[RMDB]
RNA sequence: GGGAACGACUCGAGUAGAGUCGAAAACGCUCCAGGGGAAUCAGGGCAUCGCCUCCUUUUCUGGGAGGACACUCCCUUCUGAUGGUGAAUGGGAACUCCCUUCCUCCUGCAGCAGCCUGCCUGCAGCUGGAGGUUCCUACUUCGGUAGGAACCUCCAAAAAGAAACAACAACAACAAC
Reactivity to 2A3 in 0.01 (KOAc 150mM, MgCl2 10mM, bicine 150mM(pH8.5), 24C), signal-to-noise 3, nucleotides 027 to 126: c070g010c030u040c040c000a040g010g010g000g060a020a040u100c060a060g020g030g030c060a050u100c060g020c000c010u020c030c000u160u200u170u120c160u160g000g000g000a000g000g000a010c000a030c020u020c000c040c050u010u000c040u080g140a220u100g110g150u160g000a060a040u140g000g000g030a030a030c010u070c020c000c020u000u010c010c000u020c000c000u040g010c010a000g000c020a010g030c000c000u060g010c000c010u050g000c000a010g040c040
Reactivity to DMS in 0.01 (KOAc 150mM, MgCl2 10mM, bicine 150mM(pH8.5), 24C), signal-to-noise 2, nucleotides 027 to 126: c100g000c030u030c030c010a000g000g010g000g020a070a040u090c140a060g040g020g040c280a140u000c170g000c010c000u000c010c060u000u030u040u000c240u000g040g000g030a040g060g020a080c260a060c120u000c020c000c020u020u020c050u000g000a200u040g000g060u020g000a050a030u110g020g000g020a010a220c210u000c030c000c010u010u090c060c070u000c040c000u020g040c260a040g000c050a090g010c070c000u020g030c070c000u010g000c040a070g000c190